[RMDB]
Overview: Source: RMDB library OK1LIB, as collected in RNAgym. This 177-nucleotide RNA was probed chemically with 2A3 and DMS. 2A3 is a SHAPE reagent: it acylates the 2'-hydroxyl of flexible nucleotides of all four kinds. The reactions ran in a buffer of 150 mM KOAc, 10 mM MgCl2 and 150 mM bicine (pH 8.5), at 24 C. DMS adducts were read by reverse transcription with MarathonRT.

RNA sequence: GGGAACGACUCGAGUAGAGUCGAAAAGAAAGCGUGUGGCUGCGAUGUCGUAUGACCGGCCAAAUGCGACGCAGUCUUGCGCGCGAAAGUCCUUGAUGCUGGUAGGCCGGUUAUAGCAUCGGACGAAGGGCGUUCGCGACUUCGGUUGCGGGUGCCCAAAAGAAACAACAACAACAAC
Reactivity to 2A3 in 0.01 (KOAc 150mM, MgCl2 10mM, bicine 150mM(pH8.5), 24C), signal-to-noise 9, nucleotides 027 to 126: g110a030a060a010g010c020g000u040g020u050g040g000c010u010g000c020g160a220u190g040u070c010g010u050a090u150g050a050c000c000g020g000c010c000a050a170a050u200g000c000g010a010c010g000c000a000g010u030c040u150u160g020c010g000c000g000c000g060a100a040a000g010u020c010c010u050u280g010a010u010g000c020u040g020g080u060a050g020g000c000c000g000g000u010u050a040u020a010g000c000a000u000c000g000g000a010c020g010a070a110
Reactivity to DMS in 0.01 (KOAc 150mM, MgCl2 10mM, bicine 150mM(pH8.5), 24C), signal-to-noise 9, nucleotides 027 to 126: g000a100a090a130g000c000g020u000g020u000g010g000c000u000g010c010g020a120u050g010u010c010g020u000a060u020g000a040c010c010g000g000c010c010a090a100a080u030g000c010g010a040c010g000c000a010g010u010c040u060u020g010c010g000c000g000c030g000a080a100a140g000u010c010c010u020u040g020a010u000g020c010u000g000g010u020a090g000g010c000c000g000g000u010u010a040u020a010g010c000a010u000c000g000g000a020c030g010a100a110